[RMDB]
RNA sequence: GGGAACGACUCGAGUAGAGUCGAAAAGUACCCCUGGGAACUUCUGGUGCACCACAUCAAGCACCAUCCGGAGUACGCGUGGGCGUUUGUAGGAGUUGCAUGUGGCCUGCUGGCCGUUGCAGCAUGCCGUAGGGGUAGCAUUCGUGCUACCCCUACGAAAAGAAACAACAACAACAAC
Reactivity to DMS in 0.01 (KOAc 150mM, MgCl2 10mM, bicine 150mM(pH8.5), 24C), signal-to-noise 4, nucleotides 027 to 126: g020u000a120c050c000c010c050u010g020g000g010a120a080c090u000u000c150u010g010g050u010g000c030a150c130c110a110c150a150u020c160a090a090g020c000a020c010c010a050u020c120c060g000g010a110g010u000a040c060g000c150g010u000g010g000g010c080g020u010u000u010g000u010a070g010g010a080g010u010u000g000c020a020u000g030u010g010g010c020c020u010g010c230u010g000g020c020c030g010u010u000g010c080a080g010c030a050u000g030c060